[RMDB]
RNA sequence: GGGAACGACUCGAGUAGAGUCGAAAAGGGUUAGCAUUGUUAUAGGGAUAGAGGUAGUCUCCGUGCUGAUAAAGGGUGAUGUCUUUCCAUGGCCUCAACACUCUAGUGAGGCGUUCGUUAUGCAGCGGAGCGUCAUCGUUUUCGAACGAUGACGCUCAAAAGAAACAACAACAACAAC
Reactivity to DMS in 0.01 (KOAc 150mM, MgCl2 10mM, bicine 150mM(pH8.5), 24C), signal-to-noise 2, nucleotides 027 to 126: g010g010g020u000u000a100g010c090a020u000u000g020u000u000a110u020a080g010g000g010a070u000a050g010a080g000g020u010a070g020u000c010u000c050c070g000u000g010c020u000g000a090u010a070a100a100g010g000g020u000g020a080u000g000u000c060u010u000u000c040c070a050u000g030g020c000c020u010c010a050a100c150a040c150u010c100u030a050g010u010g010a040g020g010c020g020u010u000c030g000u000u010a070u010g000c090a090g020c120g000
Reactivity to 2A3 in 0.01 (KOAc 150mM, MgCl2 10mM, bicine 150mM(pH8.5), 24C), signal-to-noise 2, nucleotides 027 to 126: g080g000g040u030u060a000g040c010a070u030u150g080u120u190a030u070a210g010g010g050a060u040a180g090a030g060g010u040a020g060u090c030u040c030c020g070u060g040c040u060g000a050u120a080a060a010g030g000g000u000g060a030u060g060u040c000u070u000u030c020c050a090u080g150g040c010c000u010c030a050a020c020a060c040u090c060u070a060g040u040g050a000g000g000c010g030u010u030c000g080u100u040a130u160g060c030a010g100c050g090
Annotation
This 177-nucleotide RNA was probed chemically with DMS and 2A3. Reactivities are rounded to 0.1 and cut off at 0 and 3. DMS (dimethyl sulfate) methylates the pairing face of unpaired adenines and cytosines. The DMS profile rests on 1,893 reads. It was measured as part of the RMDB library OK2TST.